Source information
An RNA of 177 nucleotides, treated with DMS and 2A3 and read out base by base. For DMS, 1,189 sequencing reads were counted. Conditions: 150 mM KOAc, 10 mM MgCl2 and 150 mM bicine (pH 8.5), 24 C. It was measured as part of the RMDB library M2PK50.
[RMDB]
RNA sequence: GGGAACGACUCGAGUAGAGUCGAAAACACCAGAUGUUCGCAUCUGGUGAAAUAGUCAAAAGCCGAAAGAGAACGGCAAACACACGGCAGUGAAAGCCGAAAAAACUAGCCGGUUCGCCGGCUAGAAUCUAUCAUACAGCUUCGGCUGUAUGAUAGAAAAAGAAACAACAACAACAAC
Reactivity to DMS in 0.01 (KOAc 150mM, MgCl2 10mM, bicine 150mM(pH8.5), 24C), signal-to-noise 2, nucleotides 027 to 126: c000a020c000c000a010g000a010u000g000u000u000c210g000c010a000u000c000u020g000g000u000g010a020a120a070u030a080g000u020c080a130a040a110a180g010c000c000g000a030a060a130g000a170g010a130a110c000g000g000c050a050a130a160c110a050c110a080c000g020g000c020a070g000u000g010a060a150a120g000c000c000g000a010a040a060a020a170a010c010u000a010g000c000c000g020g010u000u000c170g030c010c000g000g010c000u000a000g000a010a020
Reactivity to 2A3 in 0.01 (KOAc 150mM, MgCl2 10mM, bicine 150mM(pH8.5), 24C), signal-to-noise 2, nucleotides 027 to 126: c000a000c000c000a000g000a000u010g020u020u130c230g020c180a000u000c010u010g000g020u000g000a010a000a000u080a010g070u060c020a000a020a140a090g000c000c020g120a030a080a030g260a020g020a100a050c010g030g000c090a050a060a000c090a010c010a010c040g020g000c000a020g040u060g270a150a020a040g000c000c020g070a150a090a000a000a000a010c000u000a000g010c000c010g020g000u010u050c170g050c060c000g000g000c000u000a000g000a000a000